Chemical mapping of a 207-nucleotide RNA with DMS and 2A3. For 2A3 the reverse transcriptase was SuperScript II with manganese. For DMS, 2,200 sequencing reads were counted. Conditions: 150 mM KOAc, 10 mM MgCl2 and 150 mM bicine (pH 8.5), 24 C. Source: RMDB library RNAMAK, as collected in RNAgym.
RNA sequence: GGGAACGACUCGAGUAGAGUCGAAAAUACUUGGUUCUUCGGAACCAAGUAAAAAAAGAUAUGGACAACGUAGGGAGCUGCGUUGUCGGAAACGACAACCAGCGAAGAACUACCGUUGUCCUAAGUCAAAAAACACUCCCAGUUCGCUGGGAGUGAACUAUCAAAUCGUAUUCGUACGAUUUGAUAGAAAAGAAACAACAACAACAAC
Reactivity to DMS in 0.01 (KOAc 150mM, MgCl2 10mM, bicine 150mM(pH8.5), 24C), signal-to-noise 1, nucleotides 027 to 156: u000a020c000u000u000g010g000u010u010c000u000u000c300g060g060a040a000c000c000a000a030g000u010a000a000a020a120a040a070a110g020a070u000a070u000g020g000a090c020a010a010c020g020u000a020g020g030g020a150g020c000u000g000c110g020u010u000g040u020c000g030g000a050a060a120c020g050a040c000a010a000c000c000a050g000c000g020a140a030g010a120a120c010u000a010c060c070g010u000u000g010u010c000c020u000a000a050g000u010c010a000a160a110a110a110a110c010a020c020u000c000c000c000a070g030u020u010c230g010c020u000g020g010g000a000g020u000g010a010a070
Reactivity to 2A3 in 0.01 (KOAc 150mM, MgCl2 10mM, bicine 150mM(pH8.5), 24C), signal-to-noise 2, nucleotides 027 to 156: u050a000c000u010u000g010g000u000u010c010u020u060c300g080g000a000a000c000c000a000a000g000u000a010a000a000a000a000a010a010g010a010u020a000u020g000g000a000c000a000a000c000g000u000a000g020g010g050a210g040c000u000g030c080g060u000u000g010u000c000g000g000a000a000a000c010g000a000c000a000a000c010c010a000g020c010g050a070a080g060a010a010c000u000a000c050c100g010u000u020g000u000c000c000u000a010a010g000u000c010a020a000a000a100a090a000c010a000c010u010c000c010c000a000g020u050u090c270g020c100u000g000g010g010a000g000u000g000a010a010